[RMDB]
RNA sequence: GGGAACGACUCGAGUAGAGUCGAAAAGUAAGUCCAUUGGGAAAUCGACCAGCUCAACUGGUCGGCGUCCGGUGGAAACUACCACCAGGCUUGGGGCCGAGAGACUCAAACGGGUACGUCCGGGGUAUGAGUAGGGCACAUUCGUGUGCCCUACUCAAAAAGAAACAACAACAACAAC
Reactivity to 2A3 in 0.01 (KOAc 150mM, MgCl2 10mM, bicine 150mM(pH8.5), 24C), signal-to-noise 1, nucleotides 027 to 126: g000u000a000a000g010u020c000c000a030u010u040g230g000g000a000a020a090u060c020g000a000c000c010a000g000c050u070c160a140a120c090u000g020g000u000c000g000g000c010g030u000c000c020g000g010u010g010g000a000a030a000c000u030a020c010c020a000c040c000a060g020g020c020u100u260g060g000g160g000c000c000g000a020g010a010g020a030c010u010c050a000a070a020c030g000g030g000u050a080c000g040u000c000c030g000g000g000g000u150a150
Reactivity to DMS in 0.01 (KOAc 150mM, MgCl2 10mM, bicine 150mM(pH8.5), 24C), signal-to-noise 2, nucleotides 027 to 126: g020u000a010a000g000u000c000c000a010u000u000g010g100g010a020a010a050u000c010g030a000c000c000a000g030c300u100c300a080a220c000u000g000g040u000c000g060g000c300g010u000c000c000g000g000u020g050g000a000a070a000c050u000a100c020c160a020c080c070a300g010g040c000u020u040g040g010g000g000c000c000g010a080g020a150g000a000c010u000c000a050a100a140c070g000g000g010u020a060c050g000u000c030c030g060g010g000g000u020a160

Conditions: 150 mM KOAc, 10 mM MgCl2 and 150 mM bicine (pH 8.5), 24 C.
Chemical mapping of a 177-nucleotide RNA with 2A3 and DMS.
For DMS the reverse transcriptase was MarathonRT.
For DMS, 1,575 sequencing reads were counted.
It was measured as part of the RMDB library RFM100.
Reactivities are given for positions 27 through 126.